[RMDB]
RNA sequence: GGGAACGACUCGAGUAGAGUCGAAAAUCCCAAAGGUUGCCGAAUCCGAAAGGUGCGGAGGAACCGCUUUUUGGGGUUAAUCUGCAGUGAAGCUGCAGUAGGGAUACCUUCUGUCCCGCACCCGACAGCUAACUCCAAAGGCAAUAAAGGAAGGAGAGAGUGAUAGUCAUUUCGAUGACUAUCACUCAAAAGAAACAACAACAACAAC
Reactivity to DMS in 0.01 (KOAc 150mM, MgCl2 10mM, bicine 150mM(pH8.5), 24C), signal-to-noise 2, nucleotides 027 to 156: u000c000c000c000a090a140a060g040g030u010u010g010c000c010g030a160a240u000c060c000g010a100a130a230g020g010u000g000c060g000g020a070g010g020a150a180c130c140g010c090u000u000u000u020u010g030g000g030g000u000u000a020a200u000c000u010g000c030a010g000u020g000a150a250g020c020u010g000c000a020g010u000a050g010g010g010a090u000a010c020c080u000u020c010u000g020u000c300c010c000g000c090a150c060c010c030g020a130c050a080g020c050u000a060a250c000u000c030c000a060a100a150g000g060c000a090a110u010a110a050a130g010g000a090a040g010g040a300g000a290
Reactivity to 2A3 in 0.01 (KOAc 150mM, MgCl2 10mM, bicine 150mM(pH8.5), 24C), signal-to-noise 2, nucleotides 027 to 156: u050c000c000c030a090a050a000g020g010u010u000g000c010c000g080a130a060u060c020c030g060a080a000a010g000g030u020g010c010g030g000a040g010g020a130a060c100c010g020c040u170u090u030u100u170g030g000g000g000u020u000a040a000u010c000u000g000c000a010g010u040g220a150a030g120c010u000g000c000a000g000u000a020g000g020g000a010u060a070c000c000u010u000c010u010g000u000c000c020c000g040c010a040c000c020c010g020a090c080a030g020c000u040a000a000c010u020c000c000a050a020a010g000g000c010a000a000u070a050a050a010g020g000a010a010g000g000a040g010a000
Annotation: Structure probing data (DMS and 2A3) for a 207-nucleotide construct. The DMS profile rests on 2,184 reads. The 2A3 profile rests on 1,150 reads. Reactivities are given for positions 27 through 156. Source: RMDB library OK3TST, as collected in RNAgym.